[RMDB]
Description:
The data come from the RNA Mapping Database (RMDB), library M2RFPK. Structure probing data (DMS and 2A3) for a 207-nucleotide construct. The RNA was probed in 150 mM KOAc, 10 mM MgCl2 and 150 mM bicine (pH 8.5) at 24 C. High 2A3 reactivity points to a flexible backbone, as in loops and unpaired stretches. The 2A3 profile rests on 1,478 reads. 2A3 adducts were read by reverse transcription with SuperScript II with manganese.

RNA sequence: GGGAACGACUCGAGUAGAGUCGAAAAGAAAGAAAGAAGCGAGCUGGCGCAGCCGCACGUGCAACCGUCAAUCCAGCACUUCACAAGUCUUGUCGUUCUGACAGGACAUCCAUCAACCCACCGGGAAAAAAGGACUACAGCUUCGGCUGUAGUCCAACAAAAAUGACAACUUCGGUUGUCAUUUUUGAAAAGAAACAACAACAACAAC
Reactivity to DMS in 0.01 (KOAc 150mM, MgCl2 10mM, bicine 150mM(pH8.5), 24C), signal-to-noise 1, nucleotides 027 to 156: g000a120a080a220g000a090a200a200g000a020a070g030c000g000a080g070c020u000g000g190c000g080c030a100g020c040c000g000c080a060c210g030u000g020c020a020a060c040c020g020u000c020a110a060u000c030c060a080g030c020a080c030u010u010c020a100c060a100a160g000u000c000u000u000g050u000c010g000u000u020c100u010g010a040c000a000g010g020a040c010a040u000c050c010a070u000c040a020a120c030c000c030a060c120c030g000g020g010a000a020a070a090a230a230g060g000a070c000u000a010c000a020g000c000u000u020c300g040g000c000u010g000u000a000g000u000c010c000a010a020
Reactivity to 2A3 in 0.01 (KOAc 150mM, MgCl2 10mM, bicine 150mM(pH8.5), 24C), signal-to-noise 2, nucleotides 027 to 156: g030a030a060a020g030a020a070a010g020a060a010g030c070g080a000g000c030u020g010g020c030g030c100a050g040c040c070g090c050a070c070g100u110g050c020a070a060c090c020g070u090c030a030a060u040c010c010a000g040c030a060c040u050u080c060a050c060a260a070g000u000c010u010u010g010u000c010g080u220u250c120u220g000a000c000a000g010g000a000c000a000u000c000c000a050u050c040a070a140c000c000c020a060c060c080g010g070g020a020a150a020a020a040a000g020g000a070c000u000a000c010a000g010c000u040u070c160g100g000c000u010g000u000a000g000u000c000c000a000a000